Conditions: 150 mM KOAc, 10 mM MgCl2 and 150 mM bicine (pH 8.5), 24 C. Structure probing data (DMS) for a 177-nucleotide construct. DMS adducts were read by reverse transcription with MarathonRT. Reactivities are given for positions 27 through 126.
[RMDB]
RNA sequence: GGGAACGACUCGAGUAGAGUCGAAAAGUUCCGGCAUUGUCGGGGUUGUAGGACUACAAUAUCGAGAAAAUAUUUGAAGUGGAAUCAACUGGAAAGUUGAACUGUAAAAAGUGAUAGUCUUGUACACCACUUUAGUGUCGUUCGCGACACUAAAGUGAAAAGAAACAACAACAACAAC
Reactivity to DMS in 0.01 (KOAc 150mM, MgCl2 10mM, bicine 150mM(pH8.5), 24C), signal-to-noise 1, nucleotides 027 to 126: g000u010u000c000c000g020g020c060a050u000u020g000u000c030g000g010g000g020u000u010g020u000a040g010g000a090c070u000a050c090a010a080u000a050u000c020g000a140g000a170a050a080a080u000a040u020u010u010g020a130a140g010u000g000g010a150a240u000c000a010a010c010u020g000g020a160a100a020g000u000u010g000a010a050c040u000g000u000a030a040a030a060a020g010u010g020a070u000a050g030u000c020u000u000g000u000a140c110a140c090